Conditions: 150 mM KOAc, 10 mM MgCl2 and 150 mM bicine (pH 8.5), 24 C. Chemical mapping of a 177-nucleotide RNA with 2A3 and DMS. DMS adducts were read by reverse transcription with MarathonRT. Values cover nucleotides 27 to 126. Source: RMDB library OK1LIB, as collected in RNAgym. As a SHAPE reagent, 2A3 marks flexible, mostly unpaired nucleotides at the ribose 2'-OH.
[RMDB]
RNA sequence: GGGAACGACUCGAGUAGAGUCGAAAAUGCGCAUGCCCCGCGUGCAGCUCGCGUUUCGGUUCAUGGGCCCCGAAGAUGCCGGACGGACGAGACGGAUCCUGUGCCGCGCCGCCGAGCAGGCUAUUACAUCUGAGCUAAAUUUCGAUUUAGCUCAGAUAAAAGAAACAACAACAACAAC
Reactivity to 2A3 in 0.01 (KOAc 150mM, MgCl2 10mM, bicine 150mM(pH8.5), 24C), signal-to-noise 7, nucleotides 027 to 126: u130g010c040g000c030a020u100g040c000c000c020c020g030c020g000u030g030c040a050g020c030u040c020g050c010g010u010u070u070c040g000g010u040u050c040a140u190g040g030g010c000c000c000c010g050a080a010g050a040u170g030c020c000g050g070a060c060g020g040a050c030g030a030g020a060c010g020g000a030u060c010c040u080g040u150g030c000c010g000c010g010c010c010g020c020c010g010a010g030c040a020g070g000c040u110a100u110u170a100c090
Reactivity to DMS in 0.01 (KOAc 150mM, MgCl2 10mM, bicine 150mM(pH8.5), 24C), signal-to-noise 5, nucleotides 027 to 126: u040g020c040g010c050a060u030g020c050c020c030c140g000c090g030u000g000c050a100g000c070u010c030g030c050g010u010u010u010c030g000g030u010u000c040a080u020g020g000g000c010c020c010c030g000a090a080g000a080u020g010c010c010g010g000a120c050g000g010a100c040g010a150g000a100c090g000g010a080u000c050c040u000g010u020g010c000c020g010c030g010c050c040g020c060c020g020a070g010c070a090g000g000c050u010a070u020u030a110c180